Source information: Structure probing data (2A3) for a 207-nucleotide construct. The data come from the RNA Mapping Database (RMDB), library OK3TST.

RNA sequence: GGGAACGACUCGAGUAGAGUCGAAAAGACGUGGAGGUUACGCGCCCUCCUUUGCGCGUAAGUACGUCGAAAUUCGGUGCUUGGGAUCGCACCGUUAGAUCCAUUUGAUAUCCGCUUGGUGCCGCGGUUGGGCAUUUACACUUACCCGAAAGGGGAAGCCUCACUGGUAGUUCGCUACCAGUGAGGCAAAAGAAACAACAACAACAAC
Reactivity to 2A3 in 0.01 (KOAc 150mM, MgCl2 10mM, bicine 150mM(pH8.5), 24C), signal-to-noise 1, nucleotides 027 to 156: g020a000c000g000u010g100g120a200g110g290u030u000a000c000g000c000g000c060c000c000u160c030c070u130u030u160g000c000g000c000g000u000a010a010g130u020a000c000g000u030c070g020a000a000a090u070u100c000g010g000u010g010c040u110u160g080g240g020a040u090c030g000c000a000c010c000g000u000u000a010g000a060u030c020c000a170u110u130u220g160a120u100a100u080c080c040g040c130u060u220g010g040u030g020c050c050g070c070g110g000u070u060g120g000g000c020a050u050u070u050a040c070a010c040u070u070a050c010c010c010g000a000a050a000g030g000g000g000a000a020